[RMDB]
Annotation:
The record gives the reactivity of an RNA of 207 nucleotides to 2A3 and DMS. The 2A3 profile rests on 1,324 reads. The reactions ran in a buffer of 150 mM KOAc, 10 mM MgCl2 and 150 mM bicine (pH 8.5), at 24 C.
RNA sequence: GGGAACGACUCGAGUAGAGUCGAAAAGUUAGGCCAGGCUCCUAUACAAACACAGGUUGCUGAUCUGACGACGUCGAGAGACGCCCAAGAUUAGGACAGGAUAUAUCGAACCAAGGUAUAUCCCCAUAAAACUCGGAACACUUCGGUGUUCCGAGAAGCAUGUGAGUAUCUUCGGAUACUCACAUGCAAAAGAAACAACAACAACAAC
Reactivity to 2A3 in 0.01 (KOAc 150mM, MgCl2 10mM, bicine 150mM(pH8.5), 24C), signal-to-noise 2, nucleotides 027 to 156: g000u010u000a020g000g010c030c020a060g080g080c020u060c000c010u100a130u120a210c190a060a230a030c100a010c040a140g090g010u210u110g040c000u010g000a020u000c000u010g020a000c010g000a000c000g030u000c010g010a010g010a000g000a070c010g000c010c010c010a020a040g070a220u160u270a030g000g060a040c100a060g010g000a000u000a000u000a010u000c020g020a090a120c110c070a160a000g000g000u010a000u000a000u010c010c000c000c000a080u220a060a080a020a020c000u000c000g000g010a000a010c000a000c010u050u070c150g070g000u010g000u000u000c000c000g000a000g000a000a000
Reactivity to DMS in 0.01 (KOAc 150mM, MgCl2 10mM, bicine 150mM(pH8.5), 24C), signal-to-noise 1, nucleotides 027 to 156: g000u010u000a030g000g020c100c070a120g040g040c020u010c010c050u060a100u000a130c040a120a150a240c110a120c080a100g030g050u000u000g060c000u010g020a010u000c050u000g010a210c010g010a000c040g000u020c000g010a300g010a300g000a020c000g030c020c020c120a190a030g060a090u030u000a090g000g000a080c100a080g000g030a050u000a000u000a010u000c000g010a110a300c190c200a000a160g000g020u000a020u000a010u000c000c000c020c020a030u000a030a070a040a260c010u000c000g040g010a040a010c010a010c000u000u000c230g050g050u000g030u000u030c000c000g000a000g040a010a100